[RMDB]
RNA sequence: GGGAACGACUCGAGUAGAGUCGAAAAAGUAUCGGGUUCGCCCGAUACUGUUGGCGCGCGGCCUUUGUCCUGUCGCGCGUAUAUUGCGCGCGAUAUACGCCCAUGUGGGGUCGUUCGCGACCCCAAAGUAUUCGUAUAACUUCGGUUAUACGAAUACAAAAGAAACAACAACAACAAC
Reactivity to 2A3 in 0.01 (KOAc 150mM, MgCl2 10mM, bicine 150mM(pH8.5), 24C), signal-to-noise 4, nucleotides 027 to 126: a000g010u010a000u010c000g010g030g020u040u070c160g070c040c000c000g000a000u000a000c000u000g000u010u100g030g000c020g000c000g000c030g060g040c020c030u060u060u100g050u040c010c000u030g020u020c010g000c000g000c010g010u000a070u020a030u040u290g000c020g000c000g000c000g010a000u010a020u010a060c030g030c010c030c040a120u180g070u090g130g020g010g010u010c010g000u040u050c150g000c000g050a030c010c020c000c020a020a000a000
Reactivity to DMS in 0.01 (KOAc 150mM, MgCl2 10mM, bicine 150mM(pH8.5), 24C), signal-to-noise 6, nucleotides 027 to 126: a010g010u000a000u000c000g010g010g010u000u010c240g020c010c000c000g010a000u000a000c000u000g010u010u010g010g010c030g020c170g010c050g010g010c040c060u000u000u000g010u000c040c040u000g010u000c020g020c030g010c000g020u000a030u010a080u010u010g010c020g000c010g020c000g000a010u000a050u000a070c080g010c010c080c100a130u010g000u000g000g000g000g020u000c000g010u000u010c160g010c010g000a020c000c000c000c000a000a010a070